[RMDB]
RNA sequence: GGGAACGACUCGAGUAGAGUCGAAAAUCUUGGGGUGGGCUUCCUACUUAGAUGCUUUCAGCAGUUAUCCGCUCCGCACUUGGCUACCCAGCGUUUACCGUGGGCACGAUAACUGGUACACCAGAGGUGCGUCCUUCCCGGUCCUCUCGUACUAGGGCUCGCUAGGAAAUUUCGAUUUCCUAGCGAGAAAAGAAACAACAACAACAAC
Reactivity to 2A3 in 0.01 (KOAc 150mM, MgCl2 10mM, bicine 150mM(pH8.5), 24C), signal-to-noise 1, nucleotides 027 to 156: u020c020u060u130g010g000g010g010u000g020g020g000c000u100u000c030c000u040a260c020u030u100a060g100a100u130g060c040u020u230u130c080a090g040c000a000g030u010u060a030u000c020c030g010c050u000c020c000g060c000a050c030u040u060g080g000c040u040a090c010c020c030a110g050c020g070u070u120u140a140c040c030g000u130g020g000g000c020a000c070g020a010u010a000a030c000u000g000g090u060a020c040a050c080c030a040g010a010g000g010u050g050c090g010u000c000c000u020u090c000c020c000g010g030u000c000c000u010c040u080c010g020u020a030c040u130a060g120g000g000
This 207-nucleotide RNA was probed chemically with 2A3.
Conditions: 150 mM KOAc, 10 mM MgCl2 and 150 mM bicine (pH 8.5), 24 C.
Reactivities are given for positions 27 through 156.
For 2A3, 577 sequencing reads were counted.